[RMDB]
An RNA of 207 nucleotides, treated with 2A3 and read out base by base. Values cover nucleotides 27 to 156. For 2A3, 1,191 sequencing reads were counted. Conditions: 150 mM KOAc, 10 mM MgCl2 and 150 mM bicine (pH 8.5), 24 C.
RNA sequence: GGGAACGACUCGAGUAGAGUCGAAAACGACCGCCUGACGGGUCGGACAUAGCGUCAGGAUCAUCCGUGGCAGUCACCACGGUAAUCAUGUGGCUGAUGAUGGUUUUCCAUCUUAAUCUGACUGCGUCGUAGCAGUCUACAGUACUAUGACAUUAGACCGUGCAUUAGGUUUCGACCUAAUGCACGGAAAAGAAACAACAACAACAAC
Reactivity to 2A3 in 0.01 (KOAc 150mM, MgCl2 10mM, bicine 150mM(pH8.5), 24C), signal-to-noise 2, nucleotides 027 to 156: c010g000a000c000c000g000c000c000u000g010a000c010g000g000g000u010c040g080g020a060c040a170u200a020g050c030g020u020c000a000g000g000a020u050c080a020u000c000c010g000u000g030g000c000a010g010u030c000a000c000c000a000c010g000g000u000a000a030u080c010a000u040g000u000g000g010c010u010g010a030u060g020a000u010g000g050u070u200u300u150c030c000a010u000c000u020u040a110a130u120c090u100g020a010c000u020g000c010g000u060c050g040u090a030g020c020a000g010u000c010u000a090c030a020g020u000a030c060u040a010u110g070a060c020a090u060u070a030g050a050